[RMDB]
RNA sequence: GGGAACGACUCGAGUAGAGUCGAAAAAGACAUACGUUCGCGUAUGUCUGACGGGCACCUGACCCUAAGGAAAUGCUCUAUGACAGCACACACUGAUUGUGAUACCUCGAGAUUUCGAUCUCGAGAAGAUGAAACGCUUAUUCGUAAGCGUUUCAUCAAAAGAAACAACAACAACAAC
Reactivity to 2A3 in 0.01 (KOAc 150mM, MgCl2 10mM, bicine 150mM(pH8.5), 24C), signal-to-noise 6, nucleotides 027 to 126: a000g000a000c000a010u010a010c000g040u010u090c270g000c010g090u000a000u000g010u000c000u010g010a020c010g000g010g000c010a020c040c020u040g110a130c010c000c040u040a060a020g050g020a070a140a040u080g010c000u000c030u050a160u210g140a070c030a040g040c030a020c000a000c000a010c070u110g120a300u160u040g050u030g060a090u110a120c010c000u000c000g000a010g000a000u040u060u180c200g050a030u030c000u000c010g000a000g000a000a010
Reactivity to DMS in 0.01 (KOAc 150mM, MgCl2 10mM, bicine 150mM(pH8.5), 24C), signal-to-noise 6, nucleotides 027 to 126: a000g010a010c000a010u000a000c000g030u000u010c190g030c000g020u000a000u000g010u000c000u000g000a090c220g010g000g010c020a080c010c010u010g010a150c030c020c030u000a070a050g010g010a080a070a090u000g000c010u010c020u010a090u010g000a160c110a060g000c050a070c050a040c080a080c070u000g010a100u010u000g020u000g010a160u010a090c200c000u000c000g000a000g000a020u000u000u020c180g000a010u000c000u000c000g020a010g000a030a050
Overview
The data come from the RNA Mapping Database (RMDB), library M2PK50. Chemical mapping of a 177-nucleotide RNA with 2A3 and DMS. The 2A3 profile rests on 8,168 reads.